This 177-nucleotide RNA was probed chemically with DMS. For DMS the reverse transcriptase was MarathonRT. The DMS profile rests on 2,153 reads. The reactions ran in a buffer of 150 mM KOAc, 10 mM MgCl2 and 150 mM bicine (pH 8.5), at 24 C. The data come from the RNA Mapping Database (RMDB), library TTRINS.
RNA sequence: GGGAACGACUCGAGUAGAGUCGAAAAGAUAUGGAUAUCGAGGAUCAAGAUUCCGUUGAUCGCAUGGGCACUAUUCGGAAACGAAUAGUGCCCAUGCGGGAGGAACCUUGGGAGAUAUCCUAAGUCACAAUGUGUCUAAGUUCGCUUAGACACAUUGAAAAGAAACAACAACAACAAC
Reactivity to DMS in 0.01 (KOAc 150mM, MgCl2 10mM, bicine 150mM(pH8.5), 24C), signal-to-noise 1, nucleotides 027 to 126: g000a070u020a300u010g000g000a000u000a010u020c020g000a140g000g000a060u010c010a010a010g010a060u000u000c000c000g030u010u020g000a040u010c000g000c000a010u000g000g010g000c030a030c010u000a000u000u000c030g020g010a140a110a280c010g030a040a020u030a010g040u000g000c010c000c000a010u020g000c020g010g000g000a020g010g000a000a010c040c000u000u010g000g020g000a100g010a020u000a000u000c000c000u000a010a100g010u000c040a240